[RMDB]
RNA sequence: GGGAACGACUCGAGUAGAGUCGAAAAGCUUGAGCUCAGGAGUUCGAGGCCACCCUGGGUAACAAGGCAAAACACCAUCUCUACAAAAAAAUACAAAAAUCAGCCAGUUGUGAUGGUACAUGCCUGUAGUGCCAACUACUCCAGAGGAGUCUGAGGAGAUACUAGUACCCUUCGGGGUACUAGUAUCAAAAGAAACAACAACAACAAC
Reactivity to 2A3 in 0.01 (KOAc 150mM, MgCl2 10mM, bicine 150mM(pH8.5), 24C), signal-to-noise 1, nucleotides 027 to 156: g000c010u040u050g000a000g020c010u010c070a060g040g050a080g050u030u040c010g020a050g000g060c020c030a060c020c000c000u010g060g000g000u020a020a070c010a070a000g010g010c010a030a030a000a000c050a010c000c010a020u000c030u010c040u150a070c020a030a130a010a020a000a030a050u160a060c090a030a120a080a030a080u130c020a090g110c070c030a050g020u050u030g020u060g010a010u000g000g000u030a020c030a030u020g000c000c010u010g020u000a050g000u020g090c010c000a040a010c060u080a020c010u040c020c020a030g050a090g030g010a020g050u020c040u090g020a050g000g030a130
Reactivity to DMS in 0.01 (KOAc 150mM, MgCl2 10mM, bicine 150mM(pH8.5), 24C), signal-to-noise 2, nucleotides 027 to 156: g030c030u000u000g020a240g020c020u000c040a140g030g020a080g010u000u000c010g010a260g020g030c080c060a080c060c040c020u000g030g010g010u010a020a130c010a100a040g000g000c020a050a100a130a120c110a040c040c000a030u000c000u000c090u000a170c040a020a000a000a050a140a170a140u000a240c070a020a050a040a030a090u000c040a040g040c040c060a100g000u000u000g010u020g010a000u010g000g030u010a040c080a160u000g000c000c010u010g000u000a060g040u020g000c050c050a050a050c030u000a070c020u000c020c030a080g000a090g020g000a060g000u000c030u030g010a080g030g010a300